The record gives the reactivity of an RNA of 177 nucleotides to DMS and 2A3. The data come from the RNA Mapping Database (RMDB), library TTRDES. As a SHAPE reagent, 2A3 marks flexible, mostly unpaired nucleotides at the ribose 2'-OH. The RNA was probed in 150 mM KOAc, 10 mM MgCl2 and 150 mM bicine (pH 8.5) at 24 C. DMS (dimethyl sulfate) methylates the pairing face of unpaired adenines and cytosines.
[RMDB]
RNA sequence: GGGAACGACUCGAGUAGAGUCGAAAAGAUAUGGAAAUGAAAUCCUUCGAUAAGCUGGUCUCGGAAACGAGACCCAGCUUUUGACGAAGAAUUGUUUCCUAAGUCAAAAUCCCGCUUCGGCGGGAAACUAAUACACUAUCUUCGGAUAGUGUAUUAGAAAAGAAACAACAACAACAAC
Reactivity to DMS in 0.01 (KOAc 150mM, MgCl2 10mM, bicine 150mM(pH8.5), 24C), signal-to-noise 6, nucleotides 027 to 126: g010a050u000a300u010g000g000a020a000a030u010g010a070a070a080u010c070c010u000u000c000g020a170u000a010a020g010c000u000g010g010u000c000u000c000g000g000a090a060a170c010g000a020g000a010c170c060c030a010g010c000u000u000u010u010g010a240c140g010a020a010g010a040a070u000u000g010u000u000u000c000c000u010a070a170g000u010c020a110a110a160a180u000c010c000c000g030c000u000u010c240g020g030c010g020g010g000a010a010a090
Reactivity to 2A3 in 0.01 (KOAc 150mM, MgCl2 10mM, bicine 150mM(pH8.5), 24C), signal-to-noise 2, nucleotides 027 to 126: g010a000u060a030u120g000g030a020a030a010u030g040a080a160a140u220c040c000u010u010c030g120a150u030a250a000g000c010u000g000g000u000c000u000c000g050g000a080a060a040c010g000a010g000a000c010c010c000a000g000c000u010u020u020u090g070a050c030g000a010a020g000a010a080u010u030g000u000u010u000c010c000u020a140a010g020u010c010a020a010a040a300u040c020c000c000g010c010u060u090c240g200g000c000g010g000g000a060a000a010